[RMDB]
An RNA of 177 nucleotides, treated with DMS and 2A3 and read out base by base. The data come from the RNA Mapping Database (RMDB), library OK2TST. Values cover nucleotides 27 to 126. The DMS profile rests on 5,753 reads. For DMS the reverse transcriptase was MarathonRT. Values are in units of 0.01, from 0 to 300, in steps of 10. Conditions: 150 mM KOAc, 10 mM MgCl2 and 150 mM bicine (pH 8.5), 24 C. 2A3 is a SHAPE reagent: it acylates the 2'-hydroxyl of flexible nucleotides of all four kinds.
RNA sequence: GGGAACGACUCGAGUAGAGUCGAAAAAUCAGUAACGGCACGCUGGACGCAUCAGGCAGAGCGAUGGACGAGCUUGUAAAGCGCCUGUCAUCCAUCAGGAAGCCGCGGAACGAGGUUAAACCUGUGCUCGAUGAAGUGAAUUCGUUCACUUCAUCGAAAAAGAAACAACAACAACAAC
Reactivity to DMS in 0.01 (KOAc 150mM, MgCl2 10mM, bicine 150mM(pH8.5), 24C), signal-to-noise 6, nucleotides 027 to 126: a080u010c040a060g010u010a070a060c090g010g010c010a040c070g010c040u000g000g010a090c070g010c040a070u010c100a090g010g020c020a060g010a280g010c120g000a040u000g000g000a030c060g010a170g010c020u000u000g010u020a050a090a110g020c080g010c120c040u010g010u000c050a080u010c020c020a030u020c020a060g000g010a280a150g000c010c010g010c060g010g000a070a090c070g010a040g000g010u000u010a050a090a170c040c020u000g000u010g010c140
Reactivity to 2A3 in 0.01 (KOAc 150mM, MgCl2 10mM, bicine 150mM(pH8.5), 24C), signal-to-noise 3, nucleotides 027 to 126: a000u060c020a020g060u090a070a030c040g040g000c020a000c070g010c040u060g020g050a030c040g010c060a060u070c070a060g020g000c010a010g020a010g020c020g020a030u030g000g030a010c020g020a050g050c030u100u050g160u210a120a130a040g030c050g020c020c060u060g040u030c010a040u020c000c020a030u020c000a000g040g000a020a010g010c000c020g030c000g010g040a050a040c050g040a030g010g000u020u100a060a080a020c010c010u040g030u040g060c010